[RMDB]
RNA sequence: GGGAACGACUCGAGUAGAGUCGAAAAGCCUGCGGCUGCGCCAGCUGGAUGCCGUUCACAAUAGAGCUCACCGUCACCACGCCCGUCCGCGUGGCGCGCAUAGUGGCAGUGUAAACUCCGCCAGCAGGUCUCAACGACCGUUCGCGGUCGUUGAGACAAAAGAAACAACAACAACAAC
Reactivity to 2A3 in 0.01 (KOAc 150mM, MgCl2 10mM, bicine 150mM(pH8.5), 24C), signal-to-noise 2, nucleotides 027 to 126: g010c000c000u000g040c000g070g000c000u060g020c010g020c030c040a060g010c060u100g010g020a110u020g010c020c020g000u120u130c080a150c090a190a060u040a040g110a020g030c000u020c020a040c000c010g050u050c000a010c070c000a030c010g000c050c150c030g070u060c040c000g120c060g170u250g000g000c020g000c000g000c020a000u010a170g030u020g000g000c030a000g010u010g020u110a030a030a030c020u030c050c000g020c030c020a040g000c010a010g000

This 177-nucleotide RNA was probed chemically with 2A3. 2A3 adducts were read by reverse transcription with SuperScript II with manganese. Source: RMDB library OK1LIB, as collected in RNAgym. The RNA was probed in 150 mM KOAc, 10 mM MgCl2 and 150 mM bicine (pH 8.5) at 24 C.